Structure probing data (2A3 and DMS) for a 177-nucleotide construct. The 2A3 profile rests on 23,041 reads. The DMS profile rests on 25,629 reads. The reactions ran in a buffer of 150 mM KOAc, 10 mM MgCl2 and 150 mM bicine (pH 8.5), at 24 C. For 2A3 the reverse transcriptase was SuperScript II with manganese. It was measured as part of the RMDB library OK1LIB.
[RMDB]
RNA sequence: GGGAACGACUCGAGUAGAGUCGAAAAGGAUAGUGCUACUAAAAUGUAGUGUGCGAAAGGGGGCUGUCUGCAUGGCCGCAGCCAAGUUCGCACGGGCCGCGACUGCCGCCUUAUGGCGAUAUCCGAACCCUAUUAAUUAGUUCGCUAAUUAAUAGGGAAAAGAAACAACAACAACAAC
Reactivity to 2A3 in 0.01 (KOAc 150mM, MgCl2 10mM, bicine 150mM(pH8.5), 24C), signal-to-noise 9, nucleotides 027 to 126: g010g000a010u030a030g260u200g090c000u000a010c010u080a100a120a120a070u250g010u020a010g010u030g080u100g050c030g120a070a020a010g020g020g030g000g000c010u010g010u050c060u160g030c060a160u230g040g000c000c020g030c070a010g010c020c020a100a050g110u140u190c060g000c030a010c050g010g020g000c010c000g000c010g010a010c030u070g000c000c020g190c040c000u020u020a060u070g080g000c010g020a020u000a010u030c000c000g010a050a080
Reactivity to DMS in 0.01 (KOAc 150mM, MgCl2 10mM, bicine 150mM(pH8.5), 24C), signal-to-noise 6, nucleotides 027 to 126: g000g000a010u000a020g010u030g000c000u000a000c000u020a090a090a150a090u030g010u000a010g010u020g020u020g020c030g000a060a050a030g010g000g000g000g020c010u000g020u000c020u040g050c020a090u030g010g000c010c030g020c110a070g000c030c090a100a140g010u050u040c190g010c020a080c130g010g010g010c000c000g000c010g000a020c020u000g000c010c020g000c010c010u000u000a020u030g020g000c010g010a150u000a010u000c000c010g000a090a160